[RMDB]
Chemical mapping of a 207-nucleotide RNA with DMS and 2A3.
The 2A3 profile rests on 3,153 reads.
It was measured as part of the RMDB library OK3TST.
The RNA was probed in 150 mM KOAc, 10 mM MgCl2 and 150 mM bicine (pH 8.5) at 24 C.
In probing experiments dimethyl sulfate is read out at A N1 and C N3, which are open when not base-paired.
RNA sequence: GGGAACGACUCGAGUAGAGUCGAAAAUGUUAGAUGUUACCGAACCGCUCAGCCAAGUGAUUAAGGUAGUGUGCCCAAAUUCUGGAUGUACUUCGGAAAUACCUGAGCCACAUUUAUGUCGUGGGCUGCAGAGUAAUCUUCCUAGAAACUCCUUGGCGUUAAAUCGUGAUUUCGAUCACGAUUUAACAAAAGAAACAACAACAACAAC
Reactivity to DMS in 0.01 (KOAc 150mM, MgCl2 10mM, bicine 150mM(pH8.5), 24C), signal-to-noise 2, nucleotides 027 to 156: u000g020u000u010a060g020a050u000g010u000u000a100c020c040g010a060a100c030c030g020c050u000c040a150g030c060c040a080a090g010u000g000a080u000u000a040a080g040g010u000a080g020u010g020u000g030c000c020c030a010a080a140u000u000c050u020g010g010a100u010g020u000a090c070u000u000c170g020g000a050a080a090u000a090c000c010u010g010a170g030c010c010a020c010a090u000u000u020a080u030g000u000c130g020u000g010g020g070c030u000g000c040a090g000a100g000u000a060a070u000c050u000u010c000c010u010a040g010a060a060a060c020u000c010c010u000u010g000g030c150
Reactivity to 2A3 in 0.01 (KOAc 150mM, MgCl2 10mM, bicine 150mM(pH8.5), 24C), signal-to-noise 5, nucleotides 027 to 156: u130g030u060u070a070g020a090u020g020u030u050a040c020c010g000a040a030c020c020g020c030u040c060a030g010c040c000a070a010g010u040g040a070u120u070a070a040g040g000u040a030g040u040g030u050g050c040c000c000a030a050a020u110u050c050u080g040g010a050u070g020u100a100c030u000u050c050g010g030a000a060a070u080a030c000c000u010g000a000g010c010c010a070c010a070u190u290u170a200u300g180u120c090g010u070g020g060g030c000u040g090c020a010g030a020g070u020a030a010u010c030u030u010c000c000u010a010g020a050a030a020c020u040c010c000u040u050g080g000c020